The record gives the reactivity of an RNA of 177 nucleotides to DMS and 2A3. Values are in units of 0.01, from 0 to 300, in steps of 10. DMS adducts were read by reverse transcription with MarathonRT. The data come from the RNA Mapping Database (RMDB), library OK1LIB.
RNA sequence: GGGAACGACUCGAGUAGAGUCGAAAACAUUGAGUGAGGGAUAUUGAUGAACGUAAUUUUAGAACAGUUGAAAACACAUACUCAAAAUAAACCUAAUGACAUAGCAUUACAUAUCGAUGAUGAAACACUAGACCCCUAUGUUCGCAUAGGGGUCUAGAAAAGAAACAACAACAACAAC
Reactivity to DMS in 0.01 (KOAc 150mM, MgCl2 10mM, bicine 150mM(pH8.5), 24C), signal-to-noise 1, nucleotides 027 to 126: c110a050u040u010g000a090g020u010g000a070g000g000g000a030u010a000u000u020g000a040u020g010a040a140c090g090u000a000a010u000u000u010u000a100g000a040a060c180a110g000u000u000g000a100a270a050a090c240a180c150a080u000a060c030u060c000a000a120a120a080u040a040a100a120c050c040u000a080a050u010g000a050c010a090u000a190g000c080a010u060u000a070c050a130u000a050u000c020g000a100u030g000a080u010g000a070a070a120c200a090
Reactivity to 2A3 in 0.01 (KOAc 150mM, MgCl2 10mM, bicine 150mM(pH8.5), 24C), signal-to-noise 2, nucleotides 027 to 126: c040a050u120u080g000a000g020u020g020a050g000g140g150a020u060a060u070u060g100a120u180g080a030a000c050g080u050a280a300u120u070u040u120a110g120a070a190c140a000g030u040u170g100a010a000a080a070c190a020c000a000u180a000c000u000c000a000a000a000a000u220a110a000a000c000c000u050a050a050u040g000a020c130a030u190a040g020c000a000u000u040a000c010a010u080a070u030c060g000a000u010g000a000u010g060a300a000a000c130a000